[RMDB]
RNA sequence: GGGAACGACUCGAGUAGAGUCGAAAAGAGUAAUGGGCGCACAAGGUGAGAUGAAGCUGUAGUCUCACUGGAAGGACUAGAGGUUAGAGGAGACACGCCCAAAACAAGAAACAGCUUCAUCAAGAGAGGAUUACCGAUAUUUCGAUAUCGGUAAUCCAAAAGAAACAACAACAACAAC
Reactivity to 2A3 in 0.01 (KOAc 150mM, MgCl2 10mM, bicine 150mM(pH8.5), 24C), signal-to-noise 2, nucleotides 027 to 126: g140a010g030u120a050a000u090g040g020g030c060g030c050a030c030a080a020g160g050u130g080a170g000a020u000g000a000a000g000c000u000g010u070a010g000u030c000u000c020a060c050u040g010g050a070a000g050g010a020c030u030a080g000a020g200g020u090u100a000g010a020g110g040a010g000a000c020a010c020g010c000c000c000a000a060a010a000c000a000a040g130a090a090a000c010a000g000c000u020u000c010a040u030c020a050a010g060a020g000a020
Reactivity to DMS in 0.01 (KOAc 150mM, MgCl2 10mM, bicine 150mM(pH8.5), 24C), signal-to-noise 2, nucleotides 027 to 126: g000a010g000u010a050a120u000g020g010g000c000g010c280a050c100a110a150g070g010u040g020a170g000a020u010g020a010a060g000c000u000g030u000a160g050u000c000u020c010a050c070u030g010g000a060a140g000g000a100c080u020a110g000a090g000g000u000u010a080g020a130g000g000a050g010a040c040a170c210g000c040c010c020a000a010a110a120c200a070a070g000a060a080a080c000a000g000c000u000u000c030a000u000c030a100a120g010a090g050a200

The record gives the reactivity of an RNA of 177 nucleotides to 2A3 and DMS. Conditions: 150 mM KOAc, 10 mM MgCl2 and 150 mM bicine (pH 8.5), 24 C. It was measured as part of the RMDB library OK1LIB. The DMS profile rests on 2,714 reads.